An RNA of 207 nucleotides, treated with DMS and 2A3 and read out base by base. The reactions ran in a buffer of 150 mM KOAc, 10 mM MgCl2 and 150 mM bicine (pH 8.5), at 24 C. For DMS, 3,070 sequencing reads were counted. The data come from the RNA Mapping Database (RMDB), library RNAMAK. 2A3 adducts were read by reverse transcription with SuperScript II with manganese.
[RMDB]
RNA sequence: GGGAACGACUCGAGUAGAGUCGAAAACAGUGAAUUCGUUCACUGAAAAAAACCUUUGUGCGUUGAGGACGCUGGAGGGUGGCCCAUUGGGCCACAUCCGAUGAAAGCGUCUACCCACCAACGCACUCUGGUAAAAAUCAGACUUUCGAGUCUGAAACCAAUACGUUCCAUUCGUGGAACGUAUUGGAAAAGAAACAACAACAACAAC
Reactivity to DMS in 0.01 (KOAc 150mM, MgCl2 10mM, bicine 150mM(pH8.5), 24C), signal-to-noise 1, nucleotides 027 to 156: c010a010g000u000g010a000a020u000u020c260g050u000u000c000a000c000u000g000a020a020a030a110a090a020a120c000c020u000u000u000g010u000g000c000g010u000u000g000a030g000g000a010c020g040c020u000g010g020a060g020g040g000u000g000g020c030c000c000a300u000u020g080g040g010c010c000a000c010a030u000c020c020g020a230u000g000a140a110a070g040c010g000u010c010u000a010c000c000c000a300c170c010a010a030c010g050c000a010c000u000c000u010g040g010u000a000a010a110a080a070u010c010a020g000a040c000u000u000u000c220g020a010g020u010c000u020g000a000a110a190
Reactivity to 2A3 in 0.01 (KOAc 150mM, MgCl2 10mM, bicine 150mM(pH8.5), 24C), signal-to-noise 4, nucleotides 027 to 156: c010a000g000u000g010a000a030u110u120c120g050u090u000c010a010c020u020g110a160a010a000a000a000a000a010c020c000u040u000u010g000u000g000c000g000u010u010g020a030g010g030a000c010g000c030u040g020g030a030g040g120g020u010g000g000c020c000c070a150u130u300g020g000g000c030c020a000c000a050u060c000c020g120a260u120g040a050a050a000g000c000g000u000c000u010a010c020c020c020a060c010c010a000a010c000g000c000a000c000u000c000u000g010g010u090a070a040a010a010a050u020c010a000g000a010c010u060u120u210c270g030a010g000u000c000u000g010a060a010a000